This 177-nucleotide RNA was probed chemically with DMS.

RNA sequence: GGGAACGACUCGAGUAGAGUCGAAAAGAUAUGGAAGGAGUUUUGCUUGUCAUUAUGGACAUGCUGGAGUUCGGAAACGAACUCUCAGCAACAGCCAUGAAUGACAAGCAAAACUCCUUCCUAAGUCCAAGGUAUUGGUGUUCGCACCAAUACCUUGAAAAGAAACAACAACAACAAC
Reactivity to DMS in 0.01 (KOAc 150mM, MgCl2 10mM, bicine 150mM(pH8.5), 24C), signal-to-noise 1, nucleotides 027 to 126: g020a130u000a300u010g000g000a020a010g010g020a010g000u000u000u000u000g000c020u000u020g000u000c000a000u000u000a010u010g010g040a020c130a250u000g000c000u000g030g000a010g000u000u010c000g010g020a200a110a300c000g000a000a000c000u000c000u020c000a020g000c020a040a030c300a210g000c030c000a020u000g030a030a000u000g000a020c000a000a000g010c000a000a000a010a000c000u000c000c000u000u000c010c000u000a030a090g000u000c060

Annotation
It was measured as part of the RMDB library TTRINS. For DMS the reverse transcriptase was MarathonRT.